This 177-nucleotide RNA was probed chemically with DMS and 2A3. High DMS reactivity at an A or C suggests that its Watson-Crick edge is free. For DMS, 1,134 sequencing reads were counted. For 2A3, 1,927 sequencing reads were counted. DMS adducts were read by reverse transcription with MarathonRT.

[RMDB]
RNA sequence: GGGAACGACUCGAGUAGAGUCGAAAAGAGGGUGACCAGAUAGCCGUCGUCCUCGGCGCUGCUGCCCACCCGUGGAGCCAUCGCGGUCUCACUUCCGUAGACGCCGUCACCGAACGAGUAACACUCGCCCUCCAAGAUACUUCGGUAUCUUGGAGGGAAAAGAAACAACAACAACAAC
Reactivity to DMS in 0.01 (KOAc 150mM, MgCl2 10mM, bicine 150mM(pH8.5), 24C), signal-to-noise 2, nucleotides 027 to 126: g000a130g030g020g040u000g000a070c120c030a090g000a080u000a120g030c030c050g040u000c040g000u000c060c180u000c020g040g000c020g030c020u020g070c050u000g000c060c030c000a040c010c010c010g080u000g000g000a190g010c070c030a050u000c090g020c070g030g000u010c100u000c050a120c070u000u000c040c030g030u000a060g000a070c150g000c020c050g000u010c060a090c070c040g000a020a210c010g000a050g000u010a070a050c060a300c010u010c020g010
Reactivity to 2A3 in 0.01 (KOAc 150mM, MgCl2 10mM, bicine 150mM(pH8.5), 24C), signal-to-noise 2, nucleotides 027 to 126: g100a000g020g050g020u050g030a020c010c050a020g080a230u190a060g130c130c050g000u010c010g000u090c000c030u010c000g000g000c010g000c000u080g050c020u040g030c010c040c000a020c000c030c000g020u100g000g030a010g000c060c020a040u080c050g020c020g090g030u040c010u040c010a060c010u100u080c030c050g090u020a070g010a050c020g020c030c020g050u060c030a030c020c020g020a070a060c010g030a030g030u020a060a010c050a020c150u040c010g020